[RMDB]
RNA sequence: GGGAACGACUCGAGUAGAGUCGAAAAGCGAAGCGAGUGCUUAGGUCGGAAGAAGUCCAUGAGAACACUCAUAGGUUUGGUAUCACGGGCAACCACUUUCCAACAAAACAUAAGGAAGAACUGACGACUACUCUCGCUAGUUCGCUAGCGAGAGUAGAAAAGAAACAACAACAACAAC
Reactivity to 2A3 in 0.01 (KOAc 150mM, MgCl2 10mM, bicine 150mM(pH8.5), 24C), signal-to-noise 5, nucleotides 027 to 126: g030c030g040a020a000g020c040g020a060g080u080g000c020u080u130a080g090g000u050c060g000g070a050a040g070a150a070g060u020c030c010a030u070g020a010g010a140a080c090a040c040u010c020a090u130a120g160g060u040u090u190g090g000u110a040u110c030a030c040g020g000g000c000a040a060c010c010a020c000u070u060u050c050c010a020a030c060a050a250a000a010c050a080u170a070a060g070g000a000a030g010a080a070c040u040g050a020c040g020a030
Reactivity to DMS in 0.01 (KOAc 150mM, MgCl2 10mM, bicine 150mM(pH8.5), 24C), signal-to-noise 2, nucleotides 027 to 126: g040c020g010a000a100g000c090g010a050g070u000g010c090u000u000a020g000g030u000c020g000g020a090a030g030a060a200g030u000c000c000a070u000g000a070g000a040a140c110a020c050u000c080a100u040a170g010g070u000u020u000g000g030u030a090u030c060a020c130g040g000g000c000a070a060c010c060a110c060u000u010u000c020c000a120a110c230a080a000a100a070c250a050u030a090a120g040g000a010a090g000a060a140c110u000g000a070c110g000a110